Overview: This 207-nucleotide RNA was probed chemically with DMS and 2A3. Source: RMDB library OK3TST, as collected in RNAgym. Values are in units of 0.01, from 0 to 300, in steps of 10. Conditions: 150 mM KOAc, 10 mM MgCl2 and 150 mM bicine (pH 8.5), 24 C. The 2A3 profile rests on 560 reads. 2A3 is a SHAPE reagent: it acylates the 2'-hydroxyl of flexible nucleotides of all four kinds. For DMS, 3,009 sequencing reads were counted.

RNA sequence: GGGAACGACUCGAGUAGAGUCGAAAACCAUCGCCUCUCCAGCAAUCGCCUUUUCCCCCGAAGAUCCGACGCAGGCGUUCAAAAUGGGUAAUGAUGGCGGAAGGUGUGUUGCAUCUCGGAUUUCUGUUGGCUGAGAAUAUUACUGACAGGGAAUGAAGGCAUUAAAUUAGUUCGCUAAUUUAAUGCCAAAAGAAACAACAACAACAAC
Reactivity to DMS in 0.01 (KOAc 150mM, MgCl2 10mM, bicine 150mM(pH8.5), 24C), signal-to-noise 1, nucleotides 027 to 156: c020c010a100u000c000g020c010c000u000c030u000c010c030a080g000c040a090a050u000c080g020c000c000u000u000u000u010c010c000c000c070c030g020a160a140g000a100u000c040c030g030a100c010g020c250a140g010g040c050g020u020u020c090a030a060a060a120u030g020g030g010u010a050a090u000g020a060u000g000g030c060g010g000a110a130g020g020u010g020u020g020u000u030g000c020a100u000c040u010c050g000g030a190u000u010u000c020u000g010u000u000g030g000c040u010g000a100g000a140a110u000a060u000u000a040c020u010g000a030c030a040g030g010g000a080a090u000g020a080a250
Reactivity to 2A3 in 0.01 (KOAc 150mM, MgCl2 10mM, bicine 150mM(pH8.5), 24C), signal-to-noise 1, nucleotides 027 to 156: c010c000a030u100c060g000c000c020u000c010u000c020c010a080g000c030a080a020u060c010g030c010c030u090u090u260u090c030c030c000c000c000g000a060a010g050a020u000c030c000g000a000c020g100c110a040g100g030c120g040u080u160c030a000a000a000a150u110g000g000g100u140a140a000u110g100a020u100g020g000c000g010g090a030a000g070g010u020g020u050g000u100u010g000c020a050u030c020u050c030g010g010a020u000u040u000c060u100g000u080u020g040g000c050u050g020a020g090a070a060u210a070u080u130a020c030u030g060a010c000a030g100g020g020a020a020u210g080a100a070